This 177-nucleotide RNA was probed chemically with 2A3 and DMS. The RNA was probed in 150 mM KOAc, 10 mM MgCl2 and 150 mM bicine (pH 8.5) at 24 C. For DMS the reverse transcriptase was MarathonRT. The data come from the RNA Mapping Database (RMDB), library OK2TST. The 2A3 profile rests on 3,370 reads.

RNA sequence: GGGAACGACUCGAGUAGAGUCGAAAACUCCAUCAUGAAGAAGGUGGAGCAUGCGGUGAAGGGGCUGACGCGCACCAAGGAAAGCAUCAAGGCCGCCACUGUGCUGGCGGCUCAAGCCGCGCAGAGGCGCUGUUGGAGAAUUCGUUCUCCAACAGCGAAAAGAAACAACAACAACAAC
Reactivity to 2A3 in 0.01 (KOAc 150mM, MgCl2 10mM, bicine 150mM(pH8.5), 24C), signal-to-noise 3, nucleotides 027 to 126: c000u000c010c010a040u030c020a060u260g170a080a160g070a110a090g000g000u000g000g000a010g030c020a060u150g010c040g030g010u050g050a120a050g050g040g030g010c000u030g040a050c020g050c020g020c090a050c030c020a030a010g070g010a100a070a000g020c020a050u090c070a020a050g020g000c010c000g020c030c020a010c040u300g050u120g120c060u020g030g020c000g000g000c000u000c000a000a000g000c010c020g000c010g000c020a030g030a090g190g000
Reactivity to DMS in 0.01 (KOAc 150mM, MgCl2 10mM, bicine 150mM(pH8.5), 24C), signal-to-noise 4, nucleotides 027 to 126: c030u000c000c000a010u000c010a140u000g020a140a180g010a170a120g010g000u000g010g010a020g020c070a070u010g020c030g000g010u000g000a110a120g000g010g000g030c040u010g000a170c060g010c050g030c080a150c050c060a070a110g020g000a080a080a100g010c040a040u010c100a110a170g010g000c030c010g000c020c000a040c040u010g010u010g020c150u010g000g020c000g010g000c040u000c020a020a120g000c020c010g010c020g010c090a060g010a210g000g010